RNA sequence: GGGAACGACUCGAGUAGAGUCGAAAAGAGUAACGCACAGCUAGUUACCAAACAUGUGGUUAAAGGAAAAUGCUUGCUAUUCGAAUCAUACCUGAACACGCACCCAGAAGCCUGUGAGAAAUUUAGAAAGAUACUCCAGUUUCGACUGGAGUAUCUUAAAAGAAACAACAACAACAAC
Reactivity to DMS in 0.01 (KOAc 150mM, MgCl2 10mM, bicine 150mM(pH8.5), 24C), signal-to-noise 3, nucleotides 027 to 126: g020a110g000u020a020a020c070g010c020a050c120a070g030c080u020a050g000u040u010a080c080c060a120a110a120c130a090u010g020u010g000g000u020u000a050a060a040g020g000a070a080a090a030u040g030c050u010u000g040c070u000a120u000u000c000g000a090a030u000c020a040u010a080c010c010u000g010a070a090c070a020c030g020c050a050c000c000c010a110g020a090a180g010c060c030u010g010u000g000a140g000a080a040a060u040u010u010a070g010a090
Reactivity to 2A3 in 0.01 (KOAc 150mM, MgCl2 10mM, bicine 150mM(pH8.5), 24C), signal-to-noise 3, nucleotides 027 to 126: g120a000g030u040a040a000c010g000c020a040c020a050g100c040u090a020g020u050u090a030c050c020a040a140a020c110a060u120g030u070g070g100u100u080a180a050a070g030g050a080a090a080a050u110g010c020u030u040g060c030u070a180u190u100c040g010a060a110u040c000a020u040a180c000c000u040g020a010a010c020a010c020g040c000a000c020c020c000a010g010a090a000g000c000c000u000g030u140g040a030g120a040a110a010u160u200u080a040g040a020